[RMDB]
RNA sequence: GGGAACGACUCGAGUAGAGUCGAAAAGAGUAAGGCGGCCACAGCAGAAGCGUUCAUGUCGCAGCCGCUGUCAGAUUCUGGUGAAUCUGCGAAUUCUGCUGCAGAGCACGGAAUAGGACCGUGCAAAACCUAUAGUAGCUUUCGAGCUACUAUAGGUAAAAGAAACAACAACAACAAC
Reactivity to DMS in 0.01 (KOAc 150mM, MgCl2 10mM, bicine 150mM(pH8.5), 24C), signal-to-noise 3, nucleotides 027 to 126: g010a120g010u040a080a090g020g030c040g000g030c030c160a080c030a050g060c050a020g000a040a050g000c000g000u000u010c120a070u030g020u040c070g080c000a140g010c010c020g000c040u020g000u030c000a010g010a000u000u000c000u080g030g030u040g010a010a010u000c000u010g000c010g010a010a020u000u030c010u010g020c000u000g010c300a050g000a200g000c020a010c010g000g010a170a160u030a090g020g020a110c000c000g010u000g010c000a040a020a070
Reactivity to 2A3 in 0.01 (KOAc 150mM, MgCl2 10mM, bicine 150mM(pH8.5), 24C), signal-to-noise 6, nucleotides 027 to 126: g090a010g080u160a140a060g030g000c010g000g000c040c030a110c000a050g000c000a000g030a010a010g010c030g030u150u180c180a100u230g160u290c020g000c020a010g010c010c000g000c000u010g010u000c000a010g000a010u020u000c010u230g260g020u300g080a020a010u010c000u010g010c000g020a000a020u030u000c000u000g010c000u020g020c020a020g020a000g140c000a000c000g030g030a060a050u120a120g010g110a030c000c000g000u000g000c000a000a000a040
The record gives the reactivity of an RNA of 177 nucleotides to DMS and 2A3. In probing experiments dimethyl sulfate is read out at A N1 and C N3, which are open when not base-paired. For 2A3 the reverse transcriptase was SuperScript II with manganese. Conditions: 150 mM KOAc, 10 mM MgCl2 and 150 mM bicine (pH 8.5), 24 C. DMS adducts were read by reverse transcription with MarathonRT.